Record summary:
Structure probing data (2A3 and DMS) for a 177-nucleotide construct. DMS (dimethyl sulfate) methylates the pairing face of unpaired adenines and cytosines. Values cover nucleotides 27 to 126. The RNA was probed in 150 mM KOAc, 10 mM MgCl2 and 150 mM bicine (pH 8.5) at 24 C.

[RMDB]
RNA sequence: GGGAACGACUCGAGUAGAGUCGAAAAUGUUUUAACCAUAGCGCUUGAUGAACCUGUGCUUACAGCAGAAGAGGACAAGUCGUCAUAGCUUAUAUUAAGUGUUACAUAGGUAAUCAAUUCUGCCAUCAACUUUAUCGACUUUCGAGUCGAUAAAGUUAAAAGAAACAACAACAACAAC
Reactivity to 2A3 in 0.01 (KOAc 150mM, MgCl2 10mM, bicine 150mM(pH8.5), 24C), signal-to-noise 2, nucleotides 027 to 126: u080g060u000u160u030u060a040a000c010c010a050u050a000g040c140g000c090u040u000g020a020u030g010a040a050c000c000u010g050u050g040c000u120u010a020c040a030g000c020a030g020a150a000g010a020g080g000a010c010a010a030g030u050c030g030u010c000a050u070a020g020c010u100u050a060u060a050u230u180a110a050g020u030g030u150u030a030c020a040u080a070g110g000u130a100a060u040c050a010a050u110u000c030u040g010c040c000a110u090c010
Reactivity to DMS in 0.01 (KOAc 150mM, MgCl2 10mM, bicine 150mM(pH8.5), 24C), signal-to-noise 2, nucleotides 027 to 126: u010g010u000u010u000u010a040a090c040c030a110u000a030g030c070g010c220u010u030g010a010u000g010a100a040c010c060u000g030u000g000c020u000u010a010c040a090g000c040a040g000a040a020g000a020g010g000a020c030a040a070g010u000c050g000u000c030a020u000a200g010c000u000u000a070u010a130u010u010a090a060g000u000g010u000u010a040c080a020u010a080g020g010u000a060a090u010c100a060a060u000u000c010u010g000c000c080a100u010c140